[RMDB]
The record gives the reactivity of an RNA of 177 nucleotides to 2A3 and DMS.
RNA sequence: GGGAACGACUCGAGUAGAGUCGAAAAGAGCGAGUUAAUAUUAGAUCGUCGCGAUCUAAAUAGUCCGACACGCUGUCGCGGGGCAGCACCUCCCGGGAAAGGGCCCUUGGUCCGCAUUCGAAAGAAAGAUAUCAGUAGGAUUCGUCCUACUGAUAUCAAAAGAAACAACAACAACAAC
Reactivity to 2A3 in 0.01 (KOAc 150mM, MgCl2 10mM, bicine 150mM(pH8.5), 24C), signal-to-noise 7, nucleotides 027 to 126: g120a010g010c040g020a060g060u070u130a120a070u080a170u170u030a000g020a030u020c020g190u160c140g050c140g190a000u000c000u020a040a050a100u050a030g070u040c040c030g020a020c020a010c090g020c010u020g010u050c030g020c060g180g050g000g000c020a010g010c000a020c010c020u000c010c010c010g020g010g000a110a130a070g010g020g010c000c010c030u050u160g020g000u010c020c010g010c050a080u070u090c040g080a070a080a070g090a020a100a020
Reactivity to DMS in 0.01 (KOAc 150mM, MgCl2 10mM, bicine 150mM(pH8.5), 24C), signal-to-noise 9, nucleotides 027 to 126: g000a090g010c020g010a080g010u000u020a090a120u000a100u000u010a020g000a020u000c010g020u010c260g010c130g010a010u010c010u000a010a030a080u000a070g010u000c100c060g010a050c060a110c090g020c020u000g010u000c040g010c140g000g000g000g010c070a050g010c050a130c090c040u000c010c000c010g010g010g010a040a100a110g010g000g000c020c020c140u000u010g020g020u000c020c010g020c120a130u000u000c050g000a110a090a110g010a070a100a120
Annotation: The data come from the RNA Mapping Database (RMDB), library OK2TRN. DMS adducts were read by reverse transcription with MarathonRT.